[RMDB]
RNA sequence: GGGAACGACUCGAGUAGAGUCGAAAAACAACGAGGAAGGCGAACACAACUGCCCGAACUGUGGCAGCAGCAACGUCAGCAAGCAAGGAACUCGCAAGACGCAGGUGGGCAUCUACCAGCGGUACAGUUGCGAUGACUGCGGUGCUUGGAGUCGUGGAAUCAUGUAACAAUUCGUUGUUACAUGAUUAAAAGAAACAACAACAACAAC
Reactivity to 2A3 in 0.01 (KOAc 150mM, MgCl2 10mM, bicine 150mM(pH8.5), 24C), signal-to-noise 7, nucleotides 027 to 156: a000c080a030a010c030g030a010g060g040a070a040g040g010c030g030a170a010c060a010c020a120a140c010u030g010c000c010c020g140a160a110c150u150g040u240g050g000c010a010g000c020a010g010c020a040a030c040g040u030c010a020g020c020a100a000g020c030a040a060g090g010a050a030c020u000c020g000c020a010a020g040a020c010g000c020a020g000g010u020g010g020g020c060a090u080c030u020a010c000c010a020g010c010g020g020u150a120c060a200g070u040u020g010c000g010a030u060g040a020c030u030g020c030g040g080u050g010c010u010u030g060g020a030g020u040c010g010u030g040g050
Reactivity to DMS in 0.01 (KOAc 150mM, MgCl2 10mM, bicine 150mM(pH8.5), 24C), signal-to-noise 4, nucleotides 027 to 156: a060c050a080a070c030g010a060g030g030a110a050g010g010c010g010a080a120c100a070c080a080a040c020u000g010c020c010c030g010a080a120c120u000g020u010g020g030c020a030g010c030a080g030c020a050a060c030g020u000c020a190g000c020a060a060g020c030a080a150g000g010a130a090c120u000c020g000c040a080a100g010a040c000g000c020a050g020g020u000g010g010g030c170a110u000c030u000a050c010c010a060g030c010g020g000u010a030c040a110g020u010u000g020c030g030a110u000g000a090c020u000g020c030g020g030u000g010c010u020u020g020g010a070g010u000c040g030u000g000g010

The record gives the reactivity of an RNA of 207 nucleotides to 2A3 and DMS.